This 207-nucleotide RNA was probed chemically with 2A3. Values are in units of 0.01, from 0 to 300, in steps of 10. Source: RMDB library M2RFOK, as collected in RNAgym. For 2A3 the reverse transcriptase was SuperScript II with manganese.
RNA sequence: GGGAACGACUCGAGUAGAGUCGAAAACCUCAUUACAUUUUACUGUUCCUAAAGAAUUUGUGACAGGUACAGUAAAACGUAUUGCAAGGUUUAUCAGUUCCUAUAAACAGGUAAAUAACAAUAUAUGAAAAGCAAAGACUGUUCGCAGUCUUUGCAACCUGGAAUUAGGCUUCGGCCUAAUUCCAGGAAAAGAAACAACAACAACAAC
Reactivity to 2A3 in 0.01 (KOAc 150mM, MgCl2 10mM, bicine 150mM(pH8.5), 24C), signal-to-noise 1, nucleotides 027 to 156: c000c010u050c000a000u000u000a010c000a010u010u000u000u000a000c000u000g010u080u130c000c000u080a050a110a020g230a290a260u300u300u250g190u260g060a060c040a040g000g000u010a000c000a000g000u000a000a000a000a000c010g000u000a010u010u070g000c040a000a060g000g000u000u000u000a170u060c020a000g000u010u010c000c050u090a110u140a140a060a000c040a000g000g140u040a060a150a090u070a150a150c030a120a050u080a010u040a030u300g040a120a130a000a000g000c000a010a000a000g000a000c010u000g020u040u010c110g000c070a000g010u040c000u000u000u000g020c000a000a000